[RMDB]
Structure probing data (2A3 and DMS) for a 177-nucleotide construct. DMS (dimethyl sulfate) methylates the pairing face of unpaired adenines and cytosines. It was measured as part of the RMDB library RFM100.

RNA sequence: GGGAACGACUCGAGUAGAGUCGAAAAAGCGCUCCAGCGCGUCGCUAAGGCCGGAUUUCACGCCGCGUGGCAAAUCGCACUGGGUAAUAUCGCCGUUAACGAUCACCGUGACGUUCUCGCCCAGACGGAAGUGUGUUUUCUUCGGAAAACACACUUCAAAAGAAACAACAACAACAAC
Reactivity to 2A3 in 0.01 (KOAc 150mM, MgCl2 10mM, bicine 150mM(pH8.5), 24C), signal-to-noise 6, nucleotides 027 to 126: a000g030c030g000c000u040c010c010a010g040c010g000c010g070u040c070g010c030u060a090a080g150g020c110c030g040g030a080u140u190u260c130a050c150g020c000c010g020c040g070u120g020g020c030a060a050a100u150c020g000c000a000c030u020g000g010g030u080a090a100u110a110u200c040g020c020c000g030u030u100a070a010c010g000a030u030c020a010c020c000g010u030g020a030c000g000u010u000c010u010c000g040c010c020c020a070g050a100c080g070
Reactivity to DMS in 0.01 (KOAc 150mM, MgCl2 10mM, bicine 150mM(pH8.5), 24C), signal-to-noise 3, nucleotides 027 to 126: a080g030c070g000c240u020c010c020a050g030c120g000c040g000u010c110g010c000u020a070a060g000g000c060c010g010g010a110u000u030u020c210a130c230g020c000c030g030c050g000u020g010g010c050a070a070a100u070c000g000c050a040c020u000g010g020g020u020a090a040u070a090u010c040g020c020c020g000u000u010a100a110c020g050a150u020c040a080c040c040g010u000g010a080c060g030u000u000c010u000c010g000c030c010c020a130g030a080c200g030

The reactions ran in a buffer of 150 mM KOAc, 10 mM MgCl2 and 150 mM bicine (pH 8.5), at 24 C. DMS adducts were read by reverse transcription with MarathonRT.